[RMDB]
RNA sequence: GGGAACGACUCGAGUAGAGUCGAAAAAAUGGAGAUUCGGGAACGUGAAGCAUGGUGGGGACGAAGCCCCCUCCGGGCGCUCCCCUCGGAUCUCCGCCGGGUGGGUUCACAUCCCCAACCCGCGGGCUAGCGUCACUGUUCGCAGUGACGAAAAGAAACAACAACAACAAC
Reactivity to 2A3 in 0.01 (KOAc 150mM, MgCl2 10mM, bicine 150mM(pH8.5), 24C), signal-to-noise 5, nucleotides 027 to 129: a000a000u230g000g000a000g000a000u000u000c000g000g010g020a110a100c090g070u200g100a090a010g020c020a020u030g020g010u000g010g000g010g010a020c130g130a070a050g060c000c000c000c000c000u000c010c000g040g080g000c060g020c030u000c000c020c000c000u000c000g010g000a010u000c000u000c000c000g000c010c000g030g020g020u040g020g030g030u120u150c110a060c010a200u160c010c000c000c010a050a190c010c000c000g020c070g000g050g030c070u100a050g040
Reactivity to DMS in 0.01 (KOAc 150mM, MgCl2 10mM, bicine 150mM(pH8.5), 24C), signal-to-noise 9, nucleotides 027 to 129: a070a070u050g000g000a000g010a020u010u010c020g040g010g000a030a060c020g020u060g000a020a300g020c010a050u060g000g000u000g000g000g000g010a060c080g060a070a120g000c060c000c000c000c000u030c030c000g000g010g000c000g000c030u000c000c020c030c010u010c030g000g010a020u010c020u000c000c030g030c010c000g010g010g020u030g000g020g030u000u040c190a120c160a190u010c100c000c000c060a070a040c010c010c020g000c080g020g000g000c050u030a080g020
The record gives the reactivity of an RNA of 170 nucleotides to 2A3 and DMS. The RNA was probed in 150 mM KOAc, 10 mM MgCl2 and 150 mM bicine (pH 8.5) at 24 C. For 2A3 the reverse transcriptase was SuperScript II with manganese. For DMS the reverse transcriptase was MarathonRT.